This 207-nucleotide RNA was probed chemically with DMS and 2A3. The RNA was probed in 150 mM KOAc, 10 mM MgCl2 and 150 mM bicine (pH 8.5) at 24 C. For DMS the reverse transcriptase was MarathonRT. For 2A3, 3,139 sequencing reads were counted. For DMS, 2,455 sequencing reads were counted.

RNA sequence: GGGAACGACUCGAGUAGAGUCGAAAAACGAGUCGUACGCGACUCGAAUGGUAUUGUCGGCGUAAAAGAACAAGACGUCACCGGACGCGACCGAGCUAAAAAGCGAAACGUCAUCUACGGAUGACGAAAAACGGACCUGGGUUCGCCCAGGUCCGAAGUAUAUCGAUCAGUUCGCUGAUCGAUAUACAAAAGAAACAACAACAACAAC
Reactivity to DMS in 0.01 (KOAc 150mM, MgCl2 10mM, bicine 150mM(pH8.5), 24C), signal-to-noise 1, nucleotides 027 to 156: a140c030g010a060g010u000c000g010u000a090c210g060c000g000a040c000u000c000g030a040a080u040g020g000u000a070u010u000g030u010c010g030g000c060g000u000a030a070a070a140g020a090a170c010a070a140g020a150c000g000u010c020a090c060c050g000g040a100c010g040c000g000a110c060c020g010a190g000c060u010a070a030a100a100a120g020c010g000a060a090a150c010g000u000c010a040u010c000u000a120c220g130g010a020u000g040a050c000g000a000a020a080a050a110c020g010g000a020c030c000u000g000g010g000u010u000c270g000c020c000c010a030g010g010u000c010c020g000a000a020
Reactivity to 2A3 in 0.01 (KOAc 150mM, MgCl2 10mM, bicine 150mM(pH8.5), 24C), signal-to-noise 4, nucleotides 027 to 156: a000c000g000a000g000u010c010g010u040a030c190g000c040g080a000c000u010c000g000a020a040u100g030g030u160a130u100u140g100u070c040g000g020c020g030u050a030a060a120a110g080a120a050c060a090a040g090a040c000g010u030c020a020c060c020g040g010a010c010g020c020g020a030c010c000g030a020g030c100u150a080a030a030a040a050g030c020g030a130a040a010c010g000u000c000a000u000c000u010a030c130g100g000a000u000g000a000c000g020a060a000a000a010a000c000g000g000a000c000c000u000g000g000g030u080u060c140g060c050c000c000a000g010g000u000c000c000g000a000a000